Structure probing data (2A3 and DMS) for a 207-nucleotide construct.
Source: RMDB library M2RFPK, as collected in RNAgym.
For 2A3, 8,501 sequencing reads were counted.
[RMDB]
RNA sequence: GGGAACGACUCGAGUAGAGUCGAAAAGAUCUGCGCCGAUCCGAAACGCAAGCAAACAGCCCGCAUCAUGUCGUCUCCUAACUUCGACGUGGUGAAAUACUGAGCUUAUGCGAGUAAGCCUGUUAGCAAUAGAUCAGAACGUUCGCGUUCUGAUCAAGUAUCAGCUUUGAUUCGUCAAAGCUGAUACAAAAGAAACAACAACAACAAC
Reactivity to 2A3 in 0.01 (KOAc 150mM, MgCl2 10mM, bicine 150mM(pH8.5), 24C), signal-to-noise 7, nucleotides 027 to 156: g030a060u030c010u050g020c020g010c050c060g050a100u060c050c040g060a060a020a010c030g010c070a030a050g020c030a090a080a080c030a050g030c010c000c010g020c000a010u000c000a000u020g010u010c000g020u010c040u090c080c090u120a150a150c070u050u040c010g000a000c010g010u000g000g000u010g020a030a010a010u170a030c030u030g000a020g030c000u020u040a020u100g090c040g010a040g060u020a010a010g010c000c030u070g040u100u120a040g010c030a090a130u040a170g010a010u000c000a000g000a000a000c000g010u050u060c190g000c000g100u000u000c010u000g000a000u000c000a000a000
Reactivity to DMS in 0.01 (KOAc 150mM, MgCl2 10mM, bicine 150mM(pH8.5), 24C), signal-to-noise 3, nucleotides 027 to 156: g010a110u000c040u000g020c070g070c030c040g000a090u000c040c050g000a090a090a050c030g010c040a040a110g000c060a060a070a090c090a110g020c000c030c070g010c010a040u000c020a030u020g000u000c010g010u000c070u000c110c060u000a110a070c040u000u000c020g010a020c000g060u000g000g040u000g050a060a060a140u000a090c060u000g000a150g010c010u000u000a080u000g020c210g010a240g030u000a060a040g020c010c040u000g020u000u010a170g010c080a100a140u000a100g020a010u000c010a020g020a020a010c000g040u000u010c300g030c010g030u000u000c000u000g000a000u010c000a010a090

Values are in units of 0.01, from 0 to 300, in steps of 10. For DMS the reverse transcriptase was MarathonRT. The RNA was probed in 150 mM KOAc, 10 mM MgCl2 and 150 mM bicine (pH 8.5) at 24 C.